[RMDB]
RNA sequence: GGGAACGACUCGAGUAGAGUCGAAAAUGUGACGGCCUCAUCCACGUCAUAGUUAUGAUCACGAAUGGCUUCGAUGAUAUCACACAACUUGGGCUCCACUUUAAGCUCCUGAGCCGUGACACAACUAAUUACUGCGUCCUUUCGAGGACGCAGUAAUAAAAGAAACAACAACAACAAC
Reactivity to DMS in 0.01 (KOAc 150mM, MgCl2 10mM, bicine 150mM(pH8.5), 24C), signal-to-noise 1, nucleotides 027 to 126: u000g020u010g010a070c020g000g010c080c050u020c090a100u000c030c050a130c120g010u020c030a020u000a040g020u000u000a110u010g030a120u010c100a030c090g000a140a060u000g020g030c130u000u000c160g010a070u010g010a030u000a100u000c030a080c040a100c050a050a070c100u000u000g000g000g020c040u000c000c110a010c110u000u010u000a080a160g000c020u000c020c030u000g000a030g000c000c000g010u020g010a040c050a050c180a040a070c130u000a070
Reactivity to 2A3 in 0.01 (KOAc 150mM, MgCl2 10mM, bicine 150mM(pH8.5), 24C), signal-to-noise 1, nucleotides 027 to 126: u110g000u010g050a010c000g000g000c030c040u070c010a050u080c020c040a050c040g040u030c020a020u030a030g020u010u170a120u230g080a140u130c040a030c050g050a070a090u040g050g030c000u000u040c100g020a050u030g000a020u010a050u090c080a060c020a020c030a080a060c080u030u030g040g020g000c020u010c020c010a070c000u120u120u010a080a020g010c020u000c040c010u010g000a040g070c060c050g020u000g030a000c070a000c000a040a050c010u130a100
The record gives the reactivity of an RNA of 177 nucleotides to DMS and 2A3. DMS adducts were read by reverse transcription with MarathonRT. The 2A3 profile rests on 1,008 reads. The reactions ran in a buffer of 150 mM KOAc, 10 mM MgCl2 and 150 mM bicine (pH 8.5), at 24 C.